[RMDB]
RNA sequence: GGGAACGACUCGAGUAGAGUCGAAAAUUAAAUGUUCACAGUUCAAAAGCACCUAAGAAAAAUAGGCUGAGGAGGAAGUCUACCAGGUGUGUUCUUCCACUCGAACCAAUCAGUAGAAAUCCGAGCCGUGUUUAAGUGUAUUCGUACACUUAAACACAAAAGAAACAACAACAACAAC
Reactivity to DMS in 0.01 (KOAc 150mM, MgCl2 10mM, bicine 150mM(pH8.5), 24C), signal-to-noise 4, nucleotides 027 to 126: u000u010a060a090a120u010g010u000u000c020a060c090a110g010u000u000c070a040a110a140a120g000c040a040c030c030u000a070a100g000a060a080a070a120a100u000a060g000g020c010u010g000a070g030g000a140g000g000a060a030g010u000c040u000a050c040c090a120g000g030u000g000u010g000u010u000c000u010u010c040c060a070c080u000c100g010a030a020c050c070a020a080u000c080a090g000u000a060g010a070a070a070u000c010c010g010a080g020c130c110
Reactivity to 2A3 in 0.01 (KOAc 150mM, MgCl2 10mM, bicine 150mM(pH8.5), 24C), signal-to-noise 3, nucleotides 027 to 126: u110u050a070a020a040u120g030u080u080c030a020c020a110g030u080u060c050a100a080a040a060g010c010a030c020c020u080a090a070g120a090a200a030a020a060u060a060g040g000c030u040g030a050g080g040a040g020g020a060a030g030u000c020u030a030c000c040a070g000g090u070g030u010g010u060u000c000u060u030c010c000a030c030u050c040g000a030a030c020c000a020a040u060c010a030g050u040a020g070a060a080a030u000c040c040g020a020g040c010c020